[RMDB]
RNA sequence: GGGAACGACUCGAGUAGAGUCGAAAAGAUAUGGAUAUCCCGUGUAGGGAGCUGGAGGUCGGAAACGACCUCCCAGCGACGAUCUACGGGAUAUCCUAAGUCAAAGCUUCUACUUCGGUAGAAGCAACACCUAACAUAUGUUCGCAUAUGUUAGGUGAAAAGAAACAACAACAACAAC
Reactivity to DMS in 0.01 (KOAc 150mM, MgCl2 10mM, bicine 150mM(pH8.5), 24C), signal-to-noise 7, nucleotides 027 to 126: g010a040u000a280u020g000g010a020u000a010u000c000c000c010g020u000g020u010a120g000g010g020a150g020c000u000g000g000a030g000g020u000c000g010g010a050a060a150c000g010a020c000c000u000c170c040c030a000g010c000g000a170c220g010a110u010c050u010a040c010g000g010g010a010u000a000u000c000c010u000a010a070g000u000c020a110a130a160g010c000u000u000c000u000a010c000u000u010c210g030g010u000a010g000a010a010g020c000a050a080
Reactivity to 2A3 in 0.01 (KOAc 150mM, MgCl2 10mM, bicine 150mM(pH8.5), 24C), signal-to-noise 6, nucleotides 027 to 126: g000a010u040a020u100g010g010a010u000a000u000c010c020c040g010u060g120u100a300g070g130g120a080g000c010u010g000g010a000g000g010u010c010g020g020a050a030a040c010g010a000c000c010u010c020c000c000a000g000c000g040a060c050g070a140u020c030u080a000c000g020g030g000a000u000a000u000c000c000u000a020a010g010u000c020a080a090a120g000c000u010u000c000u000a010c000u030u080c300g160g000u000a000g000a010a000g000c000a000a000
The record gives the reactivity of an RNA of 177 nucleotides to DMS and 2A3. For 2A3 the reverse transcriptase was SuperScript II with manganese. DMS adducts were read by reverse transcription with MarathonRT. Source: RMDB library TTRDES, as collected in RNAgym.